The record gives the reactivity of an RNA of 177 nucleotides to DMS and 2A3.
RNA sequence: GGGAACGACUCGAGUAGAGUCGAAAAGGAUUGGAGUGUGUGUCGUGCGUGGUGUGCGGCGUACGGUGCAUGCCUGGCUGCUGCCCUCUCCUCAUGUGGUGUGCCCUCUGUGUGUGUCUGCCGCACACCCUCGUGGACGUUUCGACGUCCACGAGGGAAAAGAAACAACAACAACAAC
Reactivity to DMS in 0.01 (KOAc 150mM, MgCl2 10mM, bicine 150mM(pH8.5), 24C), signal-to-noise 1, nucleotides 027 to 126: g010g010a140u010u000g030g000a100g030u010g020u000g000u000g000u000c030g040u010g010c060g020u010g020g010u000g040u010g010c000g010g000c020g020u000a030c090g020g010u000g010c020a000u010g000c030c060u010g000g000c050u010g020c050u000g020c000c030c030u000c080u010c020c030u000c090a140u010g020u010g020g030u000g000u000g000c040c010c050u010c070u000g020u010g020u000g020u000g010u010c050u010g010c050c000g000c010a000c010a030
Reactivity to 2A3 in 0.01 (KOAc 150mM, MgCl2 10mM, bicine 150mM(pH8.5), 24C), signal-to-noise 1, nucleotides 027 to 126: g140g020a180u110u150g060g030a130g010u070g010u040g020u000g050u050c060g020u020g020c040g040u100g050g000u030g000u020g020c010g010g020c030g010u050a010c090g000g020u040g000c000a020u040g020c000c050u000g060g000c060u040g040c010u060g000c020c000c020u050c020u000c030c020u090c000a100u200g090u040g070g010u120g040u090g050c020c010c070u010c030u030g100u000g010u000g000u000g020u000c040u010g020c030c010g000c000a010c000a000